[RMDB]
Description
The data come from the RNA Mapping Database (RMDB), library 15KLIB. This 170-nucleotide RNA was probed chemically with DMS and 2A3. For 2A3, 3,052 sequencing reads were counted. DMS adducts were read by reverse transcription with MarathonRT.
RNA sequence: GGGAACGACUCGAGUAGAGUCGAAAACCUUCGGAUGCCCAGGUCGGACCGCGAGGAGGUGGAGAUGCCAUGCCGACCCGAAGAGGAAAGAAGGACGCGAGACGCGAACCUGUGAGUGGAAACCCGCCUGACCCCCCGUUCGCGGGGGGUAAAAGAAACAACAACAACAAC
Reactivity to DMS in 0.01 (KOAc 150mM, MgCl2 10mM, bicine 150mM(pH8.5), 24C), signal-to-noise 2, nucleotides 027 to 129: c090c000u060u110c010g000g050a120u080g000c080c000c030a140g040g000u050c110g000g040a090c000c090g080c110g010a070g000g000a000g000g060u070g000g000a150g050a000u020g040c110c060a000u080g050c000c110g020a010c060c050c050g000a030a000g010a060g000g000a120a010a020g040a000a000g000g070a070c030g090c170g060a160g020a140c150g020c060g000a070a110c090c070u010g020u030g090a100g040u000g010g020a040a110a080c000c030c050g040c050c060u060g010
Reactivity to 2A3 in 0.01 (KOAc 150mM, MgCl2 10mM, bicine 150mM(pH8.5), 24C), signal-to-noise 1, nucleotides 027 to 129: c010c000u010u000c060g030g030a040u100g000c000c040c000a020g040g050u060c000g010g020a060c090c000g000c030g000a050g000g000a010g000g010u000g020g000a080g010a010u120g020c000c010a000u060g010c000c000g010a020c000c000c010g070a090a020g040a030g020g010a000a010a010g010a020a000g000g000a000c000g090c020g050a170g050a010c060g000c060g000a100a140c000c020u110g000u050g040a010g030u060g000g000a040a000a020c000c000c010g020c020c000u020g050